[RMDB]
RNA sequence: GGGAACGACUCGAGUAGAGUCGAAAAACUCCACCAUAGAUGUAGAUUUAUUGUUGGGCUUAAUCUGGUGUGAAGUUGCCUAGAGUUCACAAUCUAAUGAGGUGCUUGGGGAGAAAGAACCUUGUUAGCCUGACAAAAUAUUCGUAUUUUGUCAGGCAAAAGAAACAACAACAACAAC
Reactivity to 2A3 in 0.01 (KOAc 150mM, MgCl2 10mM, bicine 150mM(pH8.5), 24C), signal-to-noise 1, nucleotides 027 to 126: a000c040u010c010c000a090c000c000a120u160a120g080a050u130g090u130a020g080a240u020u140u110a080u100u200g060u080u040g010g070g030c010u010u060a080a030u090c050u050g000g010u040g070u060g050a120a020g070u130u120g020c020c030u060a080g020a010g110u070u040c050a030c010a090a080u000c000u040a070a090u090g040a030g000g010u060g050c000u000u040g060g010g000g080a110g030a040a030a000g010a040a000c000c000u010u010g070u000u050a010
Reactivity to DMS in 0.01 (KOAc 150mM, MgCl2 10mM, bicine 150mM(pH8.5), 24C), signal-to-noise 2, nucleotides 027 to 126: a070c020u010c010c010a080c050c020a060u020a050g020a020u020g000u000a070g020a060u000u010u010a060u040u000g000u040u000g010g010g030c020u000u000a120a080u010c070u000g050g000u000g030u030g010a030a100g040u000u000g030c050c020u000a150g000a100g000u000u000c020a040c140a090a100u010c070u010a030a030u000g000a030g010g000u000g000c050u000u000g030g030g000g010a180g000a030a040a040g000a100a050c020c010u000u000g020u010u000a060